The record gives the reactivity of an RNA of 207 nucleotides to DMS and 2A3. For DMS the reverse transcriptase was MarathonRT. Source: RMDB library OK3TST, as collected in RNAgym. The 2A3 profile rests on 966 reads.
RNA sequence: GGGAACGACUCGAGUAGAGUCGAAAAUGUACAGUUUUAUCAUCCUGUUAUAGAUAAAUUUCAGACAGCCAUCCAUAAAGGUGACGGAGUUUAUAGGUUCACUAAUCAACGUGCUCCAGUGGUUGAGUUCUCUGUAUCAGAUAUCCUAGUGAGAACAUAAGGAUGUUGUAUUCGUACAACAUCCUUAAAAAGAAACAACAACAACAAC
Reactivity to DMS in 0.01 (KOAc 150mM, MgCl2 10mM, bicine 150mM(pH8.5), 24C), signal-to-noise 3, nucleotides 027 to 156: u010g030u000a070c070a110g030u000u010u010u000a070u000c020a130u000c090c030u000g000u010u010a150u000a120g020a120u010a030a060a080u000u000u000c060a150g010a080c040a120g040c030c000a060u000c030c040a140u010a070a060a100g010g030u000g010a070c010g020g000a080g030u000u000u010a050u000a050g040g030u000u000c030a140c050u000a050a110u000c080a060a070c060g040u000g000c020u000c020c010a130g000u000g010g020u000u000g000a130g000u010u000c010u000c000u000g010u010a080u010c070a120g020a170u000a040u000c050c040u010a120g000u010g000a050g010a020a050c030a240
Reactivity to 2A3 in 0.01 (KOAc 150mM, MgCl2 10mM, bicine 150mM(pH8.5), 24C), signal-to-noise 3, nucleotides 027 to 156: u120g020u020a000c020a020g000u050u080u060u060a130u090c040a040u040c010c000u120g030u180u130a100u050a140g080a020u070a060a090a120u140u180u070c030a040g030a080c010a040g050c020c040a020u000c010c010a040u110a140a160a030g010g030u080g040a010c020g030g020a040g000u030u090u050a210u140a040g030g080u090u050c060a070c110u050a070a130u150c060a080a030c060g030u030g030c010u030c040c040a020g040u040g020g000u040u040g020a060g020u080u040c040u000c010u060g100u040a090u180c040a000g030a100u110a040u110c000c010u030a030g050u000g120a080g030a090a030c020a050